[RMDB]
Conditions: 150 mM KOAc, 10 mM MgCl2 and 150 mM bicine (pH 8.5), 24 C.
An RNA of 177 nucleotides, treated with 2A3 and DMS and read out base by base.
RNA sequence: GGGAACGACUCGAGUAGAGUCGAAAAGGGCCGAGAAUGCGGGCCAAGCAGCGGGUUGAAGCGAUUUACGCAAAUCCGGCUACCGCAAUCGGGAAAAGAUGCUUGUGCCGUUUUCGUCAGCCACUCGUACCACUCUGUACUUCGGUACAGAGUGGUAAAAAGAAACAACAACAACAAC
Reactivity to 2A3 in 0.01 (KOAc 150mM, MgCl2 10mM, bicine 150mM(pH8.5), 24C), signal-to-noise 5, nucleotides 027 to 126: g040g000g000c010c010g010a010g020a030a020u090g020c040g050g050g110c020c010a000a000g000c010a010g080c000g020g000g020u040u030g130a160a040g010c010g030a030u110u150u280a090c030g000c000a010a010a000u000c000c000g050g020c030u060a050c000c000g060c130a060a150u300c060g010g020g090a040a110a000a040g120a030u100g000c010u020u020g040u150g050c010c010g040u020u010u010u010c120g120u020c020a010g000c040c010a040c020u010c020g020
Reactivity to DMS in 0.01 (KOAc 150mM, MgCl2 10mM, bicine 150mM(pH8.5), 24C), signal-to-noise 2, nucleotides 027 to 126: g000g000g040c030c060g000a120g010a010a010u000g010c000g000g000g020c060c010a000a000g030c010a060g000c030g000g010g000u000u000g000a140a100g010c050g010a240u050u020u040a120c060g050c010a080a090a020u030c000c010g020g000c070u040a150c020c020g010c300a200a160u050c040g000g010g020a070a040a100a090g010a160u010g010c020u010u000g010u030g010c000c010g000u000u000u000u000c000g000u010c050a090g000c010c030a130c030u000c000g020
Values are in units of 0.01, from 0 to 300, in steps of 10. For 2A3 the reverse transcriptase was SuperScript II with manganese. For DMS the reverse transcriptase was MarathonRT.